[RMDB]
RNA sequence: GGGAACGACUCGAGUAGAGUCGAAAAGAUAUGGAGAAGAUCGAUAAGCUGCGGUUCGGAAACGAACCCAGCUUUUGACGAUCCUCCUAAGUCAAAAGCACUACGACACUUCGGUGUCGUAGUGCAACUGAUUAGCCAUCUUCGGAUGGCUAAUCAGAAAAGAAACAACAACAACAAC
Reactivity to DMS in 0.01 (KOAc 150mM, MgCl2 10mM, bicine 150mM(pH8.5), 24C), signal-to-noise 1, nucleotides 027 to 126: g010a040u010a300u000g010g000a010g010a180a110g030a010u000c000g020a210u000a020a000g040c000u000g020c190g010g030u000u010c000g000g010a090a030a150c000g000a000a000c010c020c000a000g020c010u000u000u000u000g010a140c060g000a010u030c020c000u000c000c000u020a030a070g020u000c060a070a070a120a150g000c000a020c000u000a000c000g000a000c000a020c000u000u010c140g020g010u000g080u000c000g030u000a000g020u020g020c020a010a040